Structure probing data (2A3 and DMS) for a 177-nucleotide construct. The 2A3 profile rests on 3,054 reads.
RNA sequence: GGGAACGACUCGAGUAGAGUCGAAAACUGGCUCAACCUAAACGCGCCCGUGAGGUGCUUUCACGUCAGGCAGCUGUCUGAAUCCGAGUGGAGGUUCACAGUCAACGACACAAUCAGGGUUGUAGCGGUUCUAACCUCUGUUCGCAGAGGUUAGAACAAAAGAAACAACAACAACAAC
Reactivity to 2A3 in 0.01 (KOAc 150mM, MgCl2 10mM, bicine 150mM(pH8.5), 24C), signal-to-noise 3, nucleotides 027 to 126: c020u040g080g010c000u010c000a020a010c010c000u070a080a080a020c040g000c010g030c020c040c040g300u180g100a300g000g000u000g020c000u130u150u100c150a100c110g030u010c010a020g000g000c020a010g010c000u010g050u070c090u100g010a040a030u000c000c040g060a100g210u300g090g110a230g030g020u000u010c000a000c000a000g040u140c010a050a010c030g000a010c000a010c040a110a180u230c100a070g000g000g020u000u000g060u130a020g000c040g000
Reactivity to DMS in 0.01 (KOAc 150mM, MgCl2 10mM, bicine 150mM(pH8.5), 24C), signal-to-noise 2, nucleotides 027 to 126: c030u000g010g010c010u000c010a000a000c000c000u010a090a150a160c180g000c020g020c030c000c040g000u000g000a150g030g020u000g020c040u000u000u000c170a110c080g000u000c050a040g000g010c270a170g000c050u000g000u010c190u000g010a030a050u000c010c030g020a160g010u020g030g000a110g000g000u020u000c030a040c030a050g000u000c040a180a180c100g010a060c020a090c120a050a120u030c150a210g000g000g000u000u000g010u010a030g020c010g000

The reactions ran in a buffer of 150 mM KOAc, 10 mM MgCl2 and 150 mM bicine (pH 8.5), at 24 C.